[RMDB]
RNA sequence: GGGAACGACUCGAGUAGAGUCGAAAAUAGGCGAACGAGAGGCCCUCUCGUGUGCGGAGUUGUCACGCUGACAAAAUUGUUAUGAUGUCCGAUUCCGGUAGCAUCGCGGCGAUGGUUUCAUAGGACAUCUUAUGAACCCAAGGGCUUCGGGGAAGCAGAUAUACUGCCAGUUCGCUGGCAGUAUAUCAAAAGAAACAACAACAACAAC
Reactivity to 2A3 in 0.01 (KOAc 150mM, MgCl2 10mM, bicine 150mM(pH8.5), 24C), signal-to-noise 2, nucleotides 027 to 156: u190a030g000g060c030g010a020a010c040g000a050g000a010g040g080c000c000c000u000c010u000c000g080u080g030u060g060c050g030g040a090g060u100u090g060u060c060a040c090g040c150u100g000a030c050a000a100a040a060u100u050g090u150u070a110u180g050a040u020g000u000c000c020g000a010u050u020c000c000g010g040u040a020g030c020a070u180c130g050c100g140g000c040g020a060u030g030g020u020u000u070c220a230u300a050g000g000a000c010a020u010c000u000u000a040u020g030a030a010c000c020c000a020a010g000g010g010c000u060u050c020g000g040g000g010a040a030g060c030a010
Reactivity to DMS in 0.01 (KOAc 150mM, MgCl2 10mM, bicine 150mM(pH8.5), 24C), signal-to-noise 2, nucleotides 027 to 156: u000a170g000g010c000g000a080a050c050g010a120g000a080g020g010c030c020c020u000c040u000c040g020u010g030u000g060c030g000g000a230g010u000u000g000u010c040a090c130g030c020u000g030a130c040a020a060a070a160u000u020g040u010u000a080u020g010a060u000g020u000c010c020g000a180u000u000c030c010g000g040u000a200g000c010a020u000c180g020c130g030g000c040g030a270u000g000g020u010u020u000c040a110u000a180g020g000a110c100a060u000c000u010u000a020u000g000a100a100c020c020c080a090a080g020g000g020c000u000u000c030g000g020g000g020a140a100g030c020a090